[RMDB]
RNA sequence: GGGAACGACUCGAGUAGAGUCGAAAAGUCGCAUUUCAGUCAGGGCCGCCGUAAUUAGCUAUGUGCACUUCAGGUUGCUGGCAUUCUAAUUCGAGGGCAGUGAAGGGCGCGGGGUUCGUCGCAUGGCGUAACAGCAACCGUUCGCGGUUGCUGUUACAAAAGAAACAACAACAACAAC
Reactivity to 2A3 in 0.01 (KOAc 150mM, MgCl2 10mM, bicine 150mM(pH8.5), 24C), signal-to-noise 2, nucleotides 027 to 126: g020u050c030g000c040a000u050u090u070c070a060g050u060c010a000g000g070g000c040c020g030c020c000g030u040a010a030u040u020a030g040c080u040a010u050g040u010g040c030a030c050u110u100c060a110g080g070u100u070g070c020u000g020g000c000a000u060u060c000u030a040a000u070u030c090g040a030g000g000g030c020a030g000u010g130a070a070g040g030g070c040g000c070g020g000g000g000u020u140c060g010u020c020g000c110a030u060g010g020c020
Reactivity to DMS in 0.01 (KOAc 150mM, MgCl2 10mM, bicine 150mM(pH8.5), 24C), signal-to-noise 1, nucleotides 027 to 126: g050u010c080g080c030a030u000u030u010c030a040g030u010c080a040g000g000g000c040c010g000c050c020g010u020a030a010u020u030a070g000c180u010a010u010g030u020g010c000a100c080u000u000c160a110g000g010u000u000g030c000u020g020g000c010a030u000u020c040u000a060a120u000u000c040g000a120g000g020g040c000a020g000u020g020a060a090g020g030g000c020g000c040g000g010g010g000u000u020c040g010u000c040g000c080a120u000g000g000c240
Annotation:
An RNA of 177 nucleotides, treated with 2A3 and DMS and read out base by base. It was measured as part of the RMDB library OK1LIB. For 2A3, 897 sequencing reads were counted. DMS adducts were read by reverse transcription with MarathonRT. The RNA was probed in 150 mM KOAc, 10 mM MgCl2 and 150 mM bicine (pH 8.5) at 24 C. The DMS profile rests on 2,166 reads.